[RMDB]
RNA sequence: GGGAACGACUCGAGUAGAGUCGAAAAUCUAUUUGUUCAUUCUGUGCGAGCAGUUUGCCGAUGGCUUCGCGAAUAGAAGGAUGCCAGUUAACGGCGCGAUUGACCGCGUCAUUGAGCGUCAGGUUGCACAUCCAAGCUCAUUCGUGAGCUUGGAUGUAAAAGAAACAACAACAACAAC
Reactivity to 2A3 in 0.01 (KOAc 150mM, MgCl2 10mM, bicine 150mM(pH8.5), 24C), signal-to-noise 3, nucleotides 027 to 126: u030c010u010a150u070u110u100g060u050u060c060a050u090u030c010u070g010u040g080c050g010a060g000c020a030g000u050u190u170g080c040c010g050a070u120g000g000c010u020u030c070g050c060g130a080a030u070a150g070a130a010g050g010a020u040g000c000c010a010g020u040u110a180a010c050g010g010c030g000c000g030a060u070u180g110a100c020c010g040c050g020u000c020a040u040u060g010a050g020c000g020u000c010a010g050g000u030u030g020c030
Reactivity to DMS in 0.01 (KOAc 150mM, MgCl2 10mM, bicine 150mM(pH8.5), 24C), signal-to-noise 3, nucleotides 027 to 126: u010c030u000a050u010u000u010g000u000u000c070a100u010u000c080u000g030u000g000c100g000a070g010c030a010g020u020u000u010g030c060c010g010a130u000g000g020c050u010u000c070g010c050g000a080a070u030a090g020a080a090g020g000a040u000g000c020c020a070g020u010u030a070a100c170g010g000c000g020c020g000a130u010u020g000a100c120c050g000c070g010u000c030a100u000u000g000a130g010c030g030u000c030a090g000g000u000u000g030c070
Source information:
Chemical mapping of a 177-nucleotide RNA with 2A3 and DMS. For 2A3 the reverse transcriptase was SuperScript II with manganese. DMS adducts were read by reverse transcription with MarathonRT.